Source information: Chemical mapping of a 177-nucleotide RNA with 2A3 and DMS. For DMS the reverse transcriptase was MarathonRT. Source: RMDB library OK2TST, as collected in RNAgym. The DMS profile rests on 2,636 reads.
[RMDB]
RNA sequence: GGGAACGACUCGAGUAGAGUCGAAAAGGCGAUCGGGCUGGGUUCGAGUGAGGCAUCCUAUAACACCGGGUGAGGACUGUUCAGUAUUGUUCUCCUAUGCAUGCUUAGUUUUAGGGUCACAGGCCGACUACGCUUCAUGUUUCGACAUGAAGCGUAGAAAAGAAACAACAACAACAAC
Reactivity to 2A3 in 0.01 (KOAc 150mM, MgCl2 10mM, bicine 150mM(pH8.5), 24C), signal-to-noise 2, nucleotides 027 to 126: g030g000c010g050a010u020c030g020g000g010c020u000g000g040g040u060u060c070g020a010g050u080g010a040g060g000c040a020u000c000c010u130a100u030a180a020c040a010c010c070g050g010g000u070g000a020g000g000a020c030u090g020u120u100c060a050g050u090a090u110u100g000u020u010c020u010c020c000u100a100u130g020c040a020u040g000c010u070u100a060g050u140u070u050u110a020g030g000g000u030c040a040c050a150g090g000c010c010g000a020
Reactivity to DMS in 0.01 (KOAc 150mM, MgCl2 10mM, bicine 150mM(pH8.5), 24C), signal-to-noise 3, nucleotides 027 to 126: g010g010c040g020a070u000c060g010g000g010c040u000g000g010g020u000u010c040g010a110g010u000g010a070g000g010c040a060u000c040c050u000a070u020a100a080c150a130c080c060g000g000g030u000g000a100g010g000a040c090u000g010u000u000c190a090g000u010a050u000u020g020u010u000c030u000c030c080u000a100u000g010c070a090u000g010c070u000u010a090g000u000u020u000u000a060g010g000g000u010c070a070c080a090g010g000c020c010g000a200